[RMDB]
Source: RMDB library 15KLIB, as collected in RNAgym. The record gives the reactivity of an RNA of 170 nucleotides to 2A3 and DMS. DMS adducts were read by reverse transcription with MarathonRT.
RNA sequence: GGGAACGACUCGAGUAGAGUCGAAAAUUGAAGGUAAAACAGCCUGUGGGUGAAACACACCCACAGGUCCCAUUGGGCGCUAGCACUCUGGUAUCACGGUACCUUUGUGCGCCUGUUUUACCGAAGGAACGAUAGUAGUUCGCUACUAUCAAAAGAAACAACAACAACAAC
Reactivity to 2A3 in 0.01 (KOAc 150mM, MgCl2 10mM, bicine 150mM(pH8.5), 24C), signal-to-noise 9, nucleotides 027 to 129: u090u100g050a080a010g000g000u000a000a000a000a000c000a000g000c000c000u000g000u000g000g000g000u010g040a090a080a010c130a020c000a000c040c000c000a000c000a000g000g000u000c000c000c000a020u170u280g000g000g000c020g010c090u140a080g000c010a000c000u000c000u000g010g000u000a000u030c030a050c230g120g010u000a010c000c000u000u000u000g000u000g000c000g000c000c000u000g000u000u000u000u000a000c000c000g000a020a010g080g040a060a020c080
Reactivity to DMS in 0.01 (KOAc 150mM, MgCl2 10mM, bicine 150mM(pH8.5), 24C), signal-to-noise 9, nucleotides 027 to 129: u050u020g010a140a120g020g000u010a010a010a000a010c010a000g000c000c010u000g040u030g000g000g000u030g030a100a140a110c260a190c010a010c000c010c000a010c000a000g000g000u000c000c000c000a050u020u090g010g010g020c060g000c060u060a090g030c000a000c000u000c020u010g000g000u000a020u000c060a110c270g040g000u010a000c000c050u000u000u000g010u010g010c020g020c000c000u010g000u000u000u000u000a000c000c020g000a100a090g040g020a060a050c120